Chemical mapping of a 207-nucleotide RNA with DMS and 2A3. The data come from the RNA Mapping Database (RMDB), library M2RFPK. The RNA was probed in 150 mM KOAc, 10 mM MgCl2 and 150 mM bicine (pH 8.5) at 24 C. As a SHAPE reagent, 2A3 marks flexible, mostly unpaired nucleotides at the ribose 2'-OH.
[RMDB]
RNA sequence: GGGAACGACUCGAGUAGAGUCGAAAACCUGGUUUAGGGUUCCAGGCUAGCCCUAUCUAUCGGUCGAGAUGCGAGCGCUUAAGCUCAAAUUGAAUGGCUGAGUUAGUGGUGAACGUAUCCCUAUGUUAAAACGGUAGCUGCUUCGGCAGCUACCGAAGCGGAUAGUAAAGUUCGCUUUACUAUCCGCAAAAGAAACAACAACAACAAC
Reactivity to DMS in 0.01 (KOAc 150mM, MgCl2 10mM, bicine 150mM(pH8.5), 24C), signal-to-noise 1, nucleotides 027 to 156: c010c020u000g020g050u000u000u000a080g030g020g050u000u010c000c030a100g030g030c010u000a300g030c020c010c000u000a060u000c030u000a140u000c000g010g010u000c030g000a300g010a020u000g000c300g030a030g030c030g010c300u000u010a170a270g000c010u000c000a000a190a080u000u010g000a060a120u020g040g060c020u030g050a020g030u000u000a050g020u000g020g000u030g000a090a100c060g020u000a110u010c000c000c000u000a170u010g020u000u000a010a000a160a140c000g000g010u000a050g000c000u010g020c010u000u000c300g030g120c000a000g030c000u000a000c000c010g000a010a010
Reactivity to 2A3 in 0.01 (KOAc 150mM, MgCl2 10mM, bicine 150mM(pH8.5), 24C), signal-to-noise 1, nucleotides 027 to 156: c000c000u010g040g020u040u060u030a060g000g020g020u120u050c010c000a000g000g020c020u030a010g020c010c000c010u030a020u000c020u010a130u030c010g000g010u000c040g020a020g000a180u010g010c010g010a010g000c010g020c230u300u300a120a080g000c000u000c000a010a030a000u000u020g040a030a020u240g000g020c000u000g000a000g000u000u020a080g000u140g140g010u050g040a070a020c040g020u040a060u110c010c000c000u020a070u100g090u000u120a040a090a080a040c020g040g000u000a000g020c000u010g000c000u040u110c130g070g000c000a000g020c000u000a000c000c000g000a000a010